This 207-nucleotide RNA was probed chemically with 2A3.
RNA sequence: GGGAACGACUCGAGUAGAGUCGAAAAGGAGCUCGAGUUGUUCUUAGCUCAACUAAGGGCAACUGUAUGUUCUUAAGCUGUUUAAGGGCAUAUAGUUGUGUGUAGUUGAGCUACACAUAAUUAAUAGGUUAUAAACAGCUUAUGGCCUGUUCGAGCACCUAGCGAUGGAGUUCGCUCCAUCGCUAGGAAAAGAAACAACAACAACAAC
Reactivity to 2A3 in 0.01 (KOAc 150mM, MgCl2 10mM, bicine 150mM(pH8.5), 24C), signal-to-noise 2, nucleotides 027 to 156: g130g030a050g000c000u000c000g000a000g000u000u020g030u000u030c000u000u030a000g030c000u000c020a010a000c010u030a040a040g110g200g000c000a000a000c010u000g010u000a010u010g010u000u000c000u000u060a090a110g110c270u140g120u300u020u030a030a010g000g000g040c010a000u000a000u000a010g000u000u000g010u020g020u010g010u040a010g000u000u000g000a000g010c000u000a000c000a000c000a050u300a160a050u190u180a050a140u080a080g010g030u070u050a020u010a000a080a120c080a060g070c060u090u000a040u020g000g030c000c020u010g000u040u070c150g020a030g100c000a010
The reactions ran in a buffer of 150 mM KOAc, 10 mM MgCl2 and 150 mM bicine (pH 8.5), at 24 C. Reactivities are given for positions 27 through 156. Source: RMDB library OK3TST, as collected in RNAgym.